[RMDB]
RNA sequence: GGGAACGACUCGAGUAGAGUCGAAAAGAUAUGGACGAGGUACGAAGGCAACAGCUAGCUCGGAAACGAGCUAGACAUGCCUGAGUACUCGUCCUAAGUCAAAGGCCCGAAGUUCGCUUCGGGCCAACUCACAGAUGCACUUCGGUGCAUCUGUGAGAAAAGAAACAACAACAACAAC
Reactivity to DMS in 0.01 (KOAc 150mM, MgCl2 10mM, bicine 150mM(pH8.5), 24C), signal-to-noise 1, nucleotides 027 to 126: g000a080u000a300u000g000g020a020c000g060a070g020g030u030a000c000g000a300a170g010g000c000a010a240c280a060g000c000u000a010g000c000u000c000g000g000a130a110a290c000g020a030g010c010u000a000g030a000c140a230u000g000c000c000u000g000a300g010u000a080c000u010c000g000u000c000c000u000a000a080g000u040c060a080a120a080g000g000c000c030c000g000a000a000g020u000u000c300g030c000u000u000c000g000g050g000c000c000a020a010